[RMDB]
RNA sequence: GGGAACGACUCGAGUAGAGUCGAAAAGCACAGGCGAAAAUGGCGAUGAGCUAUGCUCACACGUCAGCAAAAAAGUGCCUCAUUGGCUCCCACCUUGGACAAGAGGACGGUGGCGAGAACGUAGCGCCGCCCGUGCUCCCUUCGGGGAGCACGGGCGAAAAGAAACAACAACAACAAC
Reactivity to 2A3 in 0.01 (KOAc 150mM, MgCl2 10mM, bicine 150mM(pH8.5), 24C), signal-to-noise 1, nucleotides 027 to 126: g040c020a030c070a080g030g020c010g000a070a030a000a060u030g000g000c030g000a070u050g060a000g010c070u150a080u300g000c000u010c000a000c000a020c020g030u000c010a030g170c130a040a040a040a040a040a010g110u110g010c000c020u030c000a140u000u280g080g000c000u010c030c000c000a000c030c030u000u190g200g000a060c070a180a110g000a050g080g030a000c010g000g030u050g010g010c010g000a000g000a070a000c070g070u070a100g150c080g040c010